Notes
Structure probing data (2A3 and DMS) for a 207-nucleotide construct.
[RMDB]
RNA sequence: GGGAACGACUCGAGUAGAGUCGAAAAAGAGAAGCGUAUGGAUGUAGUACAUGGCAAGGUUUACCUUGGUGGAGAAUUCUAGGAACUUCUCCACGAAUUCGCGCUCGACGGGUUCGCGCACUAGUACGUAGGGGGCAUUGUUGGCUUCGCGCCACGCAUUCUUGAACUAGUUCGCUAGUUCAAGAAUAAAAGAAACAACAACAACAAC
Reactivity to 2A3 in 0.01 (KOAc 150mM, MgCl2 10mM, bicine 150mM(pH8.5), 24C), signal-to-noise 6, nucleotides 027 to 156: a000g110a010g020a060a010g010c030g020u080a050u130g030g020a020u030g040u120a060g020u020a040c050a090u090g030g000c030a030a050g060g000u070u150u140a120c020c010u030u060g050g000u000g010g010a000g000a000a000u090u050c110u160a140g140g070a040a030c060u010u010c000u000c000c010a010c000g000a000a010u070u050c040g000c010g000c050u060c040g080a080c050g010g000g030u050u070c020g000c000g000c060a010c050u040a030g030u050a030c060g010u070a090g000g010g000g020g000c030a030u030u100g080u080u050g020g000c000u040u040c100g000c020g010c040c000a030c030g020c010
Reactivity to DMS in 0.01 (KOAc 150mM, MgCl2 10mM, bicine 150mM(pH8.5), 24C), signal-to-noise 5, nucleotides 027 to 156: a110g020a120g020a040a060g010c030g040u010a080u000g020g020a080u010g010u000a080g010u000a060c050a080u000g000g040c020a060a080g020g010u000u000u000a080c020c030u000u000g040g050u010g010g020a100g010a040a050u010u000c030u000a190g030g010a090a050c100u000u000c010u000c010c030a020c000g010a030a050u000u000c020g020c030g030c110u000c060g000a090c030g010g010g000u000u010c040g020c020g010c050a050c040u000a080g010u000a060c040g000u010a110g000g000g050g120g090c140a110u000u000g000u000u000g010g000c070u000u000c050g000c060g020c060c040a050c110g010c130
The RNA was probed in 150 mM KOAc, 10 mM MgCl2 and 150 mM bicine (pH 8.5) at 24 C.
Source: RMDB library OK3TST, as collected in RNAgym.
Values cover nucleotides 27 to 156.